Structure probing data (2A3 and DMS) for a 177-nucleotide construct. The data come from the RNA Mapping Database (RMDB), libraries RFM100 and RFMREP. Conditions: 150 mM KOAc, 10 mM MgCl2 and 150 mM bicine (pH 8.5), 24 C.
RNA sequence: GGGAACGACUCGAGUAGAGUCGAAAAAUUAUCUGGUACCUAACCCUAACGGGAACAUUGCGUGGUGGGUAGUUUGACUGGGGUGGUCGCCUCCAAAAGAGUAACGGAGGCUUCUAAAGGUUCCCUCUGCGUGAAGUAGUUUCGACUACUUCACGCAAAAAGAAACAACAACAACAAC
Reactivity to 2A3 in 0.01 (KOAc 150mM, MgCl2 10mM, bicine 150mM(pH8.5), 24C), signal-to-noise 3, nucleotides 027 to 126: a000u070u080a060u010c020u030g160g040u050a030c010c020u040a040a080c020c000c000u050a110a080c060g020g020g050a050a060c030a110u060u150g050c060g030u030g110g180u060g000g040g000u020a040g050u010u000u160g040a080c050u030g080g090g000g010u050g000g050u010c010g000c000c000u000c000c000a000a100a010a040g120a070g030u060a040a000c040g010g000a000g000g010c000u010u010c020u040a060a040a000g040g000u000u010c000c000c000u000c030
Reactivity to DMS in 0.01 (KOAc 150mM, MgCl2 10mM, bicine 150mM(pH8.5), 24C), signal-to-noise 3, nucleotides 027 to 126: a040u030u020a070u000c030u000g030g030u030a040c050c040u000a090a140c020c000c010u010a090a090c260g000g000g000a080a090c130a090u000u010g000c100g000u020g000g010u010g000g000g020u000a030g000u010u010u000g020a080c070u000g010g030g050g010u010g000g000u000c100g010c000c000u000c020c000a050a070a110a200g020a160g020u030a140a110c220g010g020a000g000g000c030u000u000c040u000a030a110a160g010g000u000u000c000c010c010u020c080
DMS adducts were read by reverse transcription with MarathonRT.